[RMDB]
RNA sequence: GGGAACGACUCGAGUAGAGUCGAAAACAAGUGGCACUCGCGUGGUUUGAGUGGACUGACAGUUCUUUCGCAAGCCAGCAGUGCAUGGGCUCAGCUACUUGGUCACGCAGCGGGCAACAACGUCGGACCAGUACCGAUUAUUCGUAAUCGGUACUGGAAAAGAAACAACAACAACAAC
Reactivity to DMS in 0.01 (KOAc 150mM, MgCl2 10mM, bicine 150mM(pH8.5), 24C), signal-to-noise 3, nucleotides 027 to 126: c090a080a100g030u030g000g000c040a030c010u000c180g010c020g010u020g000g030u000u020u010g000a060g030u000g000g020a020c000u000g030a120c290a140g010u020u000c030u030u080u000c050g000c020a070a080g010c000c010a090g000c000a030g000u050g000c010a020u070g010g020g010c030u010c020a110g000c070u010a030c060u000u010g020g000u000c030a040c100g010c040a040g000c020g010g010g000c020a100a090c110a130a050c140g030u050c040g000g000a280
Reactivity to 2A3 in 0.01 (KOAc 150mM, MgCl2 10mM, bicine 150mM(pH8.5), 24C), signal-to-noise 9, nucleotides 027 to 126: c050a070a050g130u150g140g020c010a010c020u070c150g010c070g210u090g020g020u020u030u040g030a040g010u040g000g030a030c020u090g110a030c050a110g050u110u020c030u080u300u110c060g010c030a010a010g010c010c010a010g000c000a010g010u000g020c000a020u030g010g020g000c010u010c060a050g010c010u050a040c010u120u110g040g040u120c030a020c070g030c010a020g030c020g000g040g010c010a040a040c040a050a030c050g080u070c040g010g030a020
Structure probing data (DMS and 2A3) for a 177-nucleotide construct. The RNA was probed in 150 mM KOAc, 10 mM MgCl2 and 150 mM bicine (pH 8.5) at 24 C. For DMS the reverse transcriptase was MarathonRT.